[RMDB]
The record gives the reactivity of an RNA of 177 nucleotides to DMS and 2A3. Conditions: 150 mM KOAc, 10 mM MgCl2 and 150 mM bicine (pH 8.5), 24 C. For DMS the reverse transcriptase was MarathonRT. Reactivities are rounded to 0.1 and cut off at 0 and 3. The DMS profile rests on 2,788 reads. Values cover nucleotides 27 to 126.
RNA sequence: GGGAACGACUCGAGUAGAGUCGAAAACGAGAUCGGUGCCGGGGUCACACUGGCCGCGGUGCAGCACGCCGCGUCAACGGCUGGGCUGGUGUUCGGCGUGGAUUUGUCGGCCCGGGAUACCGCGACCAGGUCCUCUUACAUUCGUGUAAGAGGACCUAAAAGAAACAACAACAACAAC
Reactivity to DMS in 0.01 (KOAc 150mM, MgCl2 10mM, bicine 150mM(pH8.5), 24C), signal-to-noise 2, nucleotides 027 to 126: c050g000a040g050a040u030c020g000g070u000g000c030c000g000g000g000g000u010c020a050c060a030c080u020g020g040c080c000g000c110g030g030u000g000c130a090g060c020a180c120g020c010c030g000c110g000u080c120a100a230c010g000g040c040u010g020g010g000c020u000g000g020u030g020u030u000c110g020g000c040g000u020g010g020a120u060u000u040g030u040c040g000g010c000c040c040g000g000g000a060u010a020c010c000g030c060g000a190c150c200
Reactivity to 2A3 in 0.01 (KOAc 150mM, MgCl2 10mM, bicine 150mM(pH8.5), 24C), signal-to-noise 5, nucleotides 027 to 126: c030g010a000g040a160u110c010g000g020u030g000c000c010g040g000g040g020u030c030a010c000a010c060u040g200g020c000c030g050c030g010g110u140g050c010a000g040c010a010c030g020c000c010g000c040g140u120c070a100a050c020g040g000c030u180g060g100g040c000u020g010g150u120g060u140u130c030g010g000c020g040u080g030g030a140u080u040u190g080u130c110g010g000c000c000c020g010g010g000a090u110a020c020c000g000c030g030a030c000c000